[RMDB]
RNA sequence: GGGAACGACUCGAGUAGAGUCGAAAAGGCUUAUCAAACGGGAUACCGUGCUUGGUUUCGGGCAUCAUCGCCGCGCUAAUAACCUCGGGAUAGCCAGCCACAACCGGACAAUUGUACUCAUUGGCACAUCCCCUUUCCUAUUCGUAGGAAAGGGGAUAAAAGAAACAACAACAACAAC
Reactivity to DMS in 0.01 (KOAc 150mM, MgCl2 10mM, bicine 150mM(pH8.5), 24C), signal-to-noise 4, nucleotides 027 to 126: g000g000c060u010u010a060u020c060a080a130a110c060g000g010g010a140u010a070c080c090g020u000g000c070u000u000g020g010u000u000u010c040g000g000g000c030a060u000c110a040u010c080g020c010c010g000c130g010c190u000a060a050u010a090a090c050c010u000c070g030g010g000a090u010a060g000c040c020a110g010c010c040a060c110a050a080c050c030g020g010a060c080a040a080u000u000g000u000a060c070u000c060a080u000u000g010g010c070a090c200
Reactivity to 2A3 in 0.01 (KOAc 150mM, MgCl2 10mM, bicine 150mM(pH8.5), 24C), signal-to-noise 2, nucleotides 027 to 126: g000g000c020u090u100a030u110c050a120a050a050c030g030g000g050a050u060a200c050c000g010u040g050c020u070u030g020g060u010u080u090c040g020g010g000c020a040u070c020a020u090c110g020c060c010g030c010g000c040u060a100a000u070a180a170c010c010u010c020g030g030g000a000u020a020g010c000c000a000g000c020c000a080c020a040a020c020c000g000g020a020c030a060a120u070u070g030u070a040c010u040c090a060u030u090g040g000c020a020c010

An RNA of 177 nucleotides, treated with DMS and 2A3 and read out base by base. 2A3 adducts were read by reverse transcription with SuperScript II with manganese. The RNA was probed in 150 mM KOAc, 10 mM MgCl2 and 150 mM bicine (pH 8.5) at 24 C. The data come from the RNA Mapping Database (RMDB), library OK2TST. For DMS, 4,245 sequencing reads were counted.